[RMDB]
RNA sequence: GGGAACGACUCGAGUAGAGUCGAAAAAGCGAUACCACUGCUUCGGUAAGAGGCGGGGAUGCGCCAAUUUUGCAUGAGUGCAACACAUCUUCGGCCGACCAGAUCACACAAGGAGUGGAAACGGCUACCACUAGGACGGUUUCGACCGUCCUAGUGGAAAAGAAACAACAACAACAAC
Reactivity to DMS in 0.01 (KOAc 150mM, MgCl2 10mM, bicine 150mM(pH8.5), 24C), signal-to-noise 2, nucleotides 027 to 126: a040g030c010g010a030u000a220c000c000a070c050u000g020c030u000u000c080g000g010u000a080a120g000a260g020g020c020g000g010g000g000a020u010g040c010g010c140c170a070a130u010u000u020u030g010c020a130u000g010a100g040u000g000c000a050a050c230a020c040a040u000c040u010u000c040g000g000c010c000g010a080c090c040a120g000a130u000c040a060c090a140c190a090a020g000g010a040g010u000g020g010a040a050a140c090g000g020c030u000a140
Reactivity to 2A3 in 0.01 (KOAc 150mM, MgCl2 10mM, bicine 150mM(pH8.5), 24C), signal-to-noise 2, nucleotides 027 to 126: a010g070c040g020a030u130a150c000c000a110c140u050g050c000u090u070c020g090g000u050a130a070g030a050g080g050c000g000g010g020g020a020u080g030c000g040c030c000a130a110u070u160u070u080g000c020a030u060g110a110g270u080g000c010a040a010c030a010c000a130u000c010u080u060c050g080g010c010c010g010a060c000c020a050g040a210u160c040a030c010a010c010a190a040g070g000a030g040u020g000g080a070a150a000c000g040g000c010u020a060

Notes
Structure probing data (DMS and 2A3) for a 177-nucleotide construct. The data come from the RNA Mapping Database (RMDB), library OK2TST.